An RNA of 177 nucleotides, treated with 2A3 and read out base by base.
The RNA was probed in 150 mM KOAc, 10 mM MgCl2 and 150 mM bicine (pH 8.5) at 24 C.
Source: RMDB library OK1LIB, as collected in RNAgym.
Reactivities are given for positions 27 through 126.
RNA sequence: GGGAACGACUCGAGUAGAGUCGAAAACUCUCCUUCUUCUUCUGGCAUGCCAAUGGGAAGGCGAAAAUCAAUCUUGACCGAGAAGCGGUCAAUCGUAUCCAUUUCAAGCGUUUCCCUCAGCUCCAUCAGGUAGGCGACUAUUCGUAGUCGCCUACCUAAAAGAAACAACAACAACAAC
Reactivity to 2A3 in 0.01 (KOAc 150mM, MgCl2 10mM, bicine 150mM(pH8.5), 24C), signal-to-noise 2, nucleotides 027 to 126: c070u030c020u060c000c010u050u010c000u140u010c000u080u080c010u170g000g000c030a130u100g060c080c000a100a100u000g000g000g000a040a000g070g020c010g020a100a080a020a030u130c080a020a020u110c080u000u020g000a000c030c030g020a130g140a300a040g280c000g000g000u020c000a000a000u040c000g070u060a060u050c050c000a040u070u110u240c090a100a050g000c060g020u020u010u000c040c010c000u090c080a000g030c000u080c000c000a080u000c000